Description: Structure probing data (2A3 and DMS) for a 177-nucleotide construct. For 2A3, 1,294 sequencing reads were counted. For DMS the reverse transcriptase was MarathonRT. For DMS, 1,468 sequencing reads were counted. The reactions ran in a buffer of 150 mM KOAc, 10 mM MgCl2 and 150 mM bicine (pH 8.5), at 24 C. 2A3 adducts were read by reverse transcription with SuperScript II with manganese.
[RMDB]
RNA sequence: GGGAACGACUCGAGUAGAGUCGAAAAGCACGUCCGGCAAGACCCGUGCGAACACUUGAGCUCCGGCUUGACCGCUCUUGUGGAUUAGGACGUUCUAGCUCCGGCUUGGCCGCUAGUUCGUCCGAAACACGUCGGUCCUAUUCGUAGGACCGACGUGAAAAGAAACAACAACAACAAC
Reactivity to 2A3 in 0.01 (KOAc 150mM, MgCl2 10mM, bicine 150mM(pH8.5), 24C), signal-to-noise 3, nucleotides 027 to 126: g000c000a020c020g070u040c050c040g070g020c000a000a030g100a200c000c000c000g020u020g030c010g010a110a020c030a010c070u030u030g000a020g000c030u050c060c000g040g000c040u110u160g040a300c000c000g000c000u000c000u060u050g000u000g060g010a050u090u230a050g000g000a000c010g020u000u000c000u000a010g000c010u100c230c000g210g020c110u150u300g110g010c030c060g000c000u000a020g030u000u000c000g000u000c000c010g010a020a000a000
Reactivity to DMS in 0.01 (KOAc 150mM, MgCl2 10mM, bicine 150mM(pH8.5), 24C), signal-to-noise 1, nucleotides 027 to 126: g000c110a000c080g000u000c070c100g000g060c100a190a000g000a000c110c120c030g010u000g000c010g010a050a180c020a050c080u010u000g000a010g000c100u000c030c180g020g040c030u010u000g010a000c080c030g000c080u040c000u000u030g010u000g000g000a270u000u000a030g020g010a010c000g000u010u000c010u040a010g010c050u010c040c080g010g060c110u090u000g000g010c050c150g000c020u000a000g000u050u000c020g010u050c000c000g000a030a010a140